About this RNA:
The record gives the reactivity of an RNA of 207 nucleotides to 2A3 and DMS.

RNA sequence: GGGAACGACUCGAGUAGAGUCGAAAAAACCUGUAAUCAAGCGAUGCAUUCGAGGCGAGGACGAGAGCAUUGUUAGGACCUUUGGGACAAGCGACGCAUACAGUUGAUCCACACUAACGUUGGUGUCGACAUACUAUCAGUCUCUAAGGAUUGAAAGGUCAUGUAAUGAGUUCGCUCAUUACAUGACAAAAGAAACAACAACAACAAC
Reactivity to 2A3 in 0.01 (KOAc 150mM, MgCl2 10mM, bicine 150mM(pH8.5), 24C), signal-to-noise 5, nucleotides 027 to 156: a000a020c050c010u050g050u070a080a080u110c090a090a020g010c010g040a030u090g020c040a070u070u070c030g040a030g040g000c020g030a030g020g020a010c020g010a020g020a020g080c040a060u030u030g040u050u070a030g020g040a030c020c010u020u020u040g000g010g010a010c030a050a020g050c040g040a040c040g020c040a030u060a110c040a040g020u030u050g060a080u020c070c000a040c000a010c050u090a110a010c060g050u060u110g020g010u010g000u000c000g020a030c020a070u160a030c020u070a080u150c050a010g000u000c000u000c010u040a020a030g070g010a070u010u110g060a130a070a020g070
Reactivity to DMS in 0.01 (KOAc 150mM, MgCl2 10mM, bicine 150mM(pH8.5), 24C), signal-to-noise 2, nucleotides 027 to 156: a070a080c020c020u010g000u010a090a070u000c030a060a080g030c040g020a160u000g010c060a150u000u010c060g010a180g030g000c020g010a130g000g010a070c040g000a160g010a100g020c020a080u000u010g010u010u000a110g010g030a080c030c030u020u000u020g020g000g020a080c040a060a170g020c000g010a060c060g000c050a060u000a010c040a060g030u000u010g010a090u000c000c020a050c080a180c080u010a040a060c160g010u000u000g000g020u000g000u000c020g030a130c010a060u000a120c040u000a140u010c030a100g000u000c020u010c070u000a100a080g020g000a120u000u020g000a040a050a150g000